[RMDB]
RNA sequence: GGGAACGACUCGAGUAGAGUCGAAAACACGCCAAGCUUGCGCACGACCAGGACGUCGAGUGGCGCUUGCAGUGACUUGGCGACCUCAAAGGCCACCGGUACCCCGCCGCGCGGCAAGCCAAGGACGAUGCCGAAUCGUAUUCGUACGAUUCGGCAUAAAAGAAACAACAACAACAAC
Reactivity to 2A3 in 0.01 (KOAc 150mM, MgCl2 10mM, bicine 150mM(pH8.5), 24C), signal-to-noise 1, nucleotides 027 to 126: c060a010c020g040c010c050a020a010g000c010u070u090g030c030g010c000a000c030g020a040c010c060a200g140g230a120c080g040u020c000g040a060g150u080g080g030c030g000c000u000u050g000c040a070g010u040g110a060c010u010u050g030g000c010g070a120c000c020u150c050a100a080a040g110g000c000c000a010c010c000g040g000u160a170c020c000c010c000g000c000c000g000c040g000c060g070g000c050a050a020g000c000c020a040a000g030g000a040c080g020
Reactivity to DMS in 0.01 (KOAc 150mM, MgCl2 10mM, bicine 150mM(pH8.5), 24C), signal-to-noise 2, nucleotides 027 to 126: c080a130c110g000c060c020a030a070g010c040u000u010g020c020g030c040a180c040g020a040c030c100a180g000g000a190c160g030u010c010g000a170g050u000g000g000c030g000c040u000u000g010c060a070g030u000g000a060c000u000u010g000g020c000g020a160c110c080u000c090a080a060a160g000g020c000c000a020c020c000g000g000u000a200c030c010c000c090g000c010c020g000c180g060c030g000g000c000a030a150g000c020c020a030a030g020g000a110c100g000
Source: RMDB library OK2TRN, as collected in RNAgym. An RNA of 177 nucleotides, treated with 2A3 and DMS and read out base by base. For 2A3, 1,712 sequencing reads were counted. The reactions ran in a buffer of 150 mM KOAc, 10 mM MgCl2 and 150 mM bicine (pH 8.5), at 24 C.